The record gives the reactivity of an RNA of 177 nucleotides to DMS and 2A3. The RNA was probed in 150 mM KOAc, 10 mM MgCl2 and 150 mM bicine (pH 8.5) at 24 C. The DMS profile rests on 5,396 reads.

RNA sequence: GGGAACGACUCGAGUAGAGUCGAAAAAGAUUGAAGAACCAUGGCUGGAGAGUGAGUGGGAAUUGAUUCUUCCUGAUGUGCAUAAUUUAUUAGGUUCUUGGAGACCUAAUCCUGACGCCGAGUGGGGUGCUCAUUCGAUAUUCGUAUCGAAUGAGCAAAAAGAAACAACAACAACAAC
Reactivity to DMS in 0.01 (KOAc 150mM, MgCl2 10mM, bicine 150mM(pH8.5), 24C), signal-to-noise 3, nucleotides 027 to 126: a030g010a080u010u000g000a130a110g000a140a120c060c050a050u010g000g000c030u000g000g010a130g020a070g030u000g010a080g070u020g010g000g010a050a060u010u020g010a110u010u020c110u020u020c010c000u000g000a060u020g020u000g000c040a040u030a060a110u000u010u010a020u030u000a010g000g010u000u010c010u030u030g000g000a150g000a010c000c000u020a000a020u000c100c060u010g000a140c130g000c010c000g010a130g040u020g000g000g000g010
Reactivity to 2A3 in 0.01 (KOAc 150mM, MgCl2 10mM, bicine 150mM(pH8.5), 24C), signal-to-noise 5, nucleotides 027 to 126: a000g080a060u130u150g060a060a020g050a100a000c030c010a040u050g040g000c020u020g060g040a050g000a020g110u110g050a050g030u080g000g050g030a040a080u040u110g110a060u110u050c010u070u030c000c020u020g040a080u050g040u050g050c040a040u070a160a090u200u080u070a090u070u000a010g030g000u020u030c060u140u150g120g010a120g000a020c000c000u000a000a010u040c000c020u070g030a030c030g040c020c030g030a020g020u070g000g010g000g000